[RMDB]
RNA sequence: GGGAACGACUCGAGUAGAGUCGAAAAAGCCUGGUCGAUACGUCGACCAGGCAAUGCCGCCACAACGGCUUCCUGGCGUGGCGGAUCUCAUCCAAUGGAGCAACUCUCCGGAUACGUCCGGAGCGAAAAAAGCUCUGCUUCUUCGGAAGCAGAGCAACAAUUCAAAGUGGUUCGCCACUUUGAAUUGAAAAGAAACAACAACAACAAC
Reactivity to 2A3 in 0.01 (KOAc 150mM, MgCl2 10mM, bicine 150mM(pH8.5), 24C), signal-to-noise 2, nucleotides 027 to 156: a000g300c000c000u000g000g010u010c000g000a020u020a090c150g050u000c000g010a000c000c000a000g000g020c000a000a000u000g010c000c000g000c000c000a000c000a020a030c040g030g010c000u190u090c010c000u030g010g030c030g020u020g010g000c030g010g000a000u030c040u010c010a110u130c070c110a100a130u250g020g000a030g010c000a020a120c050u000c010u000c020c000g000g010a050u050a010c180g070u000c000c000g020g010a000g000c010g060a080a120a030a000a010a000g000c000u000c000u010g000c000u020u000c000u010u030c090g080g000a000a000g000c000a000g010a000g020c000a010a010